[RMDB]
RNA sequence: GGGAACGACUCGAGUAGAGUCGAAAAUGAAAGAAGGAAGAUCAGGAGGAACAAACCGAACUGUCACAAGAGAAGUUCACUGAUUAACCAAAAGACAAAUAAGCGGUAAAAGAAAAAGCCACUAUUCGUAGUGGCAAAAGAAACAACAACAACAAC
Reactivity to DMS in 0.01 (KOAc 150mM, MgCl2 10mM, bicine 150mM(pH8.5), 24C), signal-to-noise 4, nucleotides 027 to 135: u020g000a070a090a080g010a120a110g000g020a040a160g000a030u000c000a010g000g010a070g010g010a040a070c090a050a090a080c060c050g010a070a080c040u010g000u000c090a060c150a070a090g010a040g010a090a070g010u000u000c020a090c000u000g010a030u000u010a030a290c010c010a040a040a060a040g000a050c080a030a000a040u030a070a060g000c070g010g010u000a040a060a040a070g010a020a030a060a050a050g000c000c000a020c000u000a020u000u030c140g010u000a000g010u000g000g010c000a030
Reactivity to 2A3 in 0.01 (KOAc 150mM, MgCl2 10mM, bicine 150mM(pH8.5), 24C), signal-to-noise 3, nucleotides 027 to 135: u170g040a020a010a050g120a060a070g010g020a010a040g010a020u010c000a000g010g020a090g040g020a050a010c010a040a090a010c030c020g040a030a020c040u040g060u090c030a010c030a100a010g050a000g030a130a000g010u010u000c020a010c040u010g000a010u030u000a010a000c000c000a020a050a010a000g050a000c030a010a010a020u080a080a010g010c010g000g020u030a000a060a020a020g080a000a040a010a000a000g000c000c010a000c000u000a000u010u010c070g030u000a000g000u000g000g000c010a010